[RMDB]
RNA sequence: GGGAACGACUCGAGUAGAGUCGAAAACUGCUGAUUUUGGUGAUCCUGUUCAGGCUGAGCGUACCAGAUCCUGGAGGUCACACUGCUGGGGCUCAGCAGGGACUUGGUGCUUUGCCACACAAAGCCCUAUGAUAGGGAUGUUCGCAUCCCUAUCAUAAAAAGAAACAACAACAACAAC
Reactivity to 2A3 in 0.01 (KOAc 150mM, MgCl2 10mM, bicine 150mM(pH8.5), 24C), signal-to-noise 4, nucleotides 027 to 126: c030u050g010c030u070g120a190u080u060u150u300g070g020u050g020a060u050c000c020u050g020u040u040c030a020g050g000c000u010g010a020g020c050g040u110a150c030c020a010g010a070u120c020c050u150g070g060a110g050g130u090c040a020c000a030c100u090g000c020u020g010g010g080g000c010u000c040a000g000c010a020g020g010g020a010c030u040u070g020g000u080g020c000u060u060u070g020c060c010a060c010a000c000a080a060a000g000c010c010c020
Reactivity to DMS in 0.01 (KOAc 150mM, MgCl2 10mM, bicine 150mM(pH8.5), 24C), signal-to-noise 5, nucleotides 027 to 126: c060u000g010c110u020g000a130u010u000u010u010g010g030u000g000a070u010c010c040u020g020u000u000c010a030g000g010c020u000g010a040g020c060g020u020a190c030c010a010g000a090u010c060c050u000g010g010a080g000g010u000c090a080c060a100c080u000g010c020u010g000g000g000g010c080u010c010a030g020c000a020g010g010g010a050c030u010u010g010g010u010g020c020u000u000u010g010c070c110a070c210a210c040a040a030a030g010c000c030c030
Conditions: 150 mM KOAc, 10 mM MgCl2 and 150 mM bicine (pH 8.5), 24 C.
Structure probing data (2A3 and DMS) for a 177-nucleotide construct.
For DMS the reverse transcriptase was MarathonRT.
In probing experiments dimethyl sulfate is read out at A N1 and C N3, which are open when not base-paired.
For 2A3 the reverse transcriptase was SuperScript II with manganese.
The data come from the RNA Mapping Database (RMDB), library OK2TRN.